[RMDB]
RNA sequence: GGGAACGACUCGAGUAGAGUCGAAAAAUUGAAGAUGUCCAAUAAUGGUAUAAGAGCUCCAACAGCAGAUGCGGUGGCGGGUUGUUCCAUGUAUUCGGCACAUGUGGCAACUAGAUCUUGGUGUGAUUUAACAUGGCGUCUAAUCGGUCGGAUACAACUCUCUAACGCAGUUCGCUGCGUUAGAGAGAAAAGAAACAACAACAACAAC
Reactivity to 2A3 in 0.01 (KOAc 150mM, MgCl2 10mM, bicine 150mM(pH8.5), 24C), signal-to-noise 1, nucleotides 027 to 156: a000u090u100g000a010a020g010a020u040g000u020c020c030a010a020u150a090a060u150g070g000u090a120u070a250a070g010a000g040c020u000c020c060a120a070c000a070g000c010a010g070a190u070g010c040g000g040u010g020g050c050g000g000g010u000u020g010u010u060c010c000a000u030g050u000a040u030u050c000g010g000c030a060c000a100u060g040u020g190g000c050a000a030c010u010a020g050a240u070c020u000u090g060g000u020g020u020g060a120u060u000u060a070a090c070a040u060g020g020c040g020u030c020u010a050a050u110c060g000g020u000c000g000g000a020u010a070c000a040a020